The record gives the reactivity of an RNA of 177 nucleotides to 2A3 and DMS.
RNA sequence: GGGAACGACUCGAGUAGAGUCGAAAAAUUUAUUGUAUGUCAUUGGCUGUUCGAGAUUAAGCAGCUGUAAUUCGAUGGCCAUACUCAUUAAAUGGGUUGGCUGUUUGCUCUGUACCAGCCCUUCUCCAUUCGUUGACCAAUUCGUUGGUCAACGAAUAAAAGAAACAACAACAACAAC
Reactivity to 2A3 in 0.01 (KOAc 150mM, MgCl2 10mM, bicine 150mM(pH8.5), 24C), signal-to-noise 2, nucleotides 027 to 126: a000u140u100u110a100u070u150g070u010a180u040g130u020c100a080u120u040g010g050c040u060g050u300u100c180g070a040g090a140u100u210a050a000g000c070a000g070c100u090g080u060a000a050u130u030c010g080a060u000g010g020c000c000a000u010a010c010u000c000a010u000u130a140a140a030u060g000g000g000u000u000g000g110c000u010g010u000u060u080g030c010u000c010u090g030u000a060c000c010a000g000c000c060c060u000u030c000u020c010c000
Reactivity to DMS in 0.01 (KOAc 150mM, MgCl2 10mM, bicine 150mM(pH8.5), 24C), signal-to-noise 2, nucleotides 027 to 126: a080u020u000u040a030u020u000g010u010a030u010g000u020c120a100u000u010g020g010c000u000g000u030u010c100g010a080g020a060u000u000a070a060g020c080a020g000c040u080g010u030a070a080u000u000c030g000a010u000g000g010c010c010a000u000a030c060u010c040a020u000u010a040a080a190u010g030g000g000u000u000g000g030c170u000g000u020u020u010g000c080u010c000u010g000u000a110c100c010a000g000c010c000c060u020u040c010u010c020c220

Overview: For 2A3 the reverse transcriptase was SuperScript II with manganese.